Chemical mapping of a 177-nucleotide RNA with DMS.
The RNA was probed in 150 mM KOAc, 10 mM MgCl2 and 150 mM bicine (pH 8.5) at 24 C.
The DMS profile rests on 3,048 reads.
RNA sequence: GGGAACGACUCGAGUAGAGUCGAAAAUACGAAAAUGCGUGAGAAGGUACAUAUAGGGACCAGGUAACCCUCCAAAGUAGAAUUAGGAAGAUGGAACCAGGUCGAGUUGGAGGUUACAAUGAGUUAACAGGUGCGAGCUAUUCGUAGCUCGCGCCUGAAAAGAAACAACAACAACAAC
Reactivity to DMS in 0.01 (KOAc 150mM, MgCl2 10mM, bicine 150mM(pH8.5), 24C), signal-to-noise 2, nucleotides 027 to 126: u020a060c100g010a050a020a080a080u030g000c020g000u010g000a070g000a090a040g000g000u010a030c080a050u020a120u050a080g000g030g000a110c070c000a000g000g020u010a030a040c090c020c030u010c010c000a000a010a050g000u020a090g010a060a070u030u010a100g010g030a050a090g010a110u020g020g050a190a110c030c040a090g000g000u010c000g030a050g000u000u000g000g000a110g000g000u000u020a000c020a060a090u010g000a080g020u010u010a090a240